[RMDB]
RNA sequence: GGGAACGACUCGAGUAGAGUCGAAAAAGGAGAAGAAGAAGGUAGAAAAGAAGGAUGAGGGCAAGAAGAAACCAGGCCGUCCUGGACUACCAAGACCUUCAGGUGCUUCAAAAACUGAACAAGUUACUGAUAGGAUGAUCUUCGGAUCAUCCUAUCAAAAAGAAACAACAACAACAAC
Reactivity to DMS in 0.01 (KOAc 150mM, MgCl2 10mM, bicine 150mM(pH8.5), 24C), signal-to-noise 3, nucleotides 027 to 126: a060g010g000a060g010a070a060g020a160a070g000a040a020g000g010u010a080g010a100a060a080a060g000a130a040g000g000a060u000g000a090g000g000g010c070a120a050g000a060a080g010a060a110a060c080c050a030g020g000c140c090g000u000c010c010u000g010g010a150c050u010a100c090c020a060a120g010a100c060c030u000u000c020a050g010g010u000g000c060u000u000c050a030a040a050a040a060c040u000g010a080a060c210a100a050g020u010u010a110c240
Reactivity to 2A3 in 0.01 (KOAc 150mM, MgCl2 10mM, bicine 150mM(pH8.5), 24C), signal-to-noise 1, nucleotides 027 to 126: a000g050g010a010g000a050a000g030a050a020g030a030a000g060g010u070a000g040a100a130a010a000g000a090a000g010g010a020u010g050a060g030g030g000c010a000a070g110a010a020g050a020a090a010c020c010a020g060g050c080c030g050u130c030c000u030g010g000a070c010u020a040c000c010a020a020g080a040c000c000u000u000c030a060g010g050u070g020c000u000u000c010a050a020a090a100a070c070u050g050a020a020c010a160a000g070u020u020a060c080
Notes: Structure probing data (DMS and 2A3) for a 177-nucleotide construct. For 2A3, 976 sequencing reads were counted. DMS adducts were read by reverse transcription with MarathonRT. The data come from the RNA Mapping Database (RMDB), library OK2TST. The reactions ran in a buffer of 150 mM KOAc, 10 mM MgCl2 and 150 mM bicine (pH 8.5), at 24 C.